RNA sequence: GGGAACGACUCGAGUAGAGUCGAAAAGAUAUGGACGAAUCAAGAACUACAGCAGAUUUCGGAAACGAAAUCGGGCUGCUUGAGUUCGUCCUAAGUCAAACUCCAAGUAGGUUCGCCUACUUGGAGACAUUAUCACUUACUUCGGUAAGUGAUAAUGAAAAGAAACAACAACAACAAC
Reactivity to 2A3 in 0.01 (KOAc 150mM, MgCl2 10mM, bicine 150mM(pH8.5), 24C), signal-to-noise 9, nucleotides 027 to 126: g020a010u050a030u120g010g000a010c000g010a010a020u020c010a010a010g040a170a210c260u300a170c300a010g000c010a010g000a020u000u000u010c010g020g000a040a030a020c000g000a000a010a010u000c010g000g290g000c020u110g010c000u030u020g030a110g100u040u000c000g000u000c000c000u000a030a000g010u000c030a070a070a100c000u000c000c000a000a000g000u010a000g050g080u040u070c300g170c060c000u000a000c000u000u000g000g000a000g000a000
Reactivity to DMS in 0.01 (KOAc 150mM, MgCl2 10mM, bicine 150mM(pH8.5), 24C), signal-to-noise 9, nucleotides 027 to 126: g000a040u000a300u000g000g010a010c000g010a030a040u000c000a010a020g010a170a100c140u020a300c010a010g020c000a160g000a010u000u000u000c000g000g000a090a070a150c000g010a010a010a010u000c000g010g040g020c000u000g000c010u000u000g000a030g010u010u000c000g020u000c000c000u000a010a080g000u000c030a140a120a220c010u000c000c000a010a000g010u000a000g010g010u000u010c300g020c000c000u000a000c000u000u000g010g000a000g000a030
Source: RMDB library TTRDES, as collected in RNAgym. Structure probing data (2A3 and DMS) for a 177-nucleotide construct. Reactivities are given for positions 27 through 126. For DMS, 23,759 sequencing reads were counted.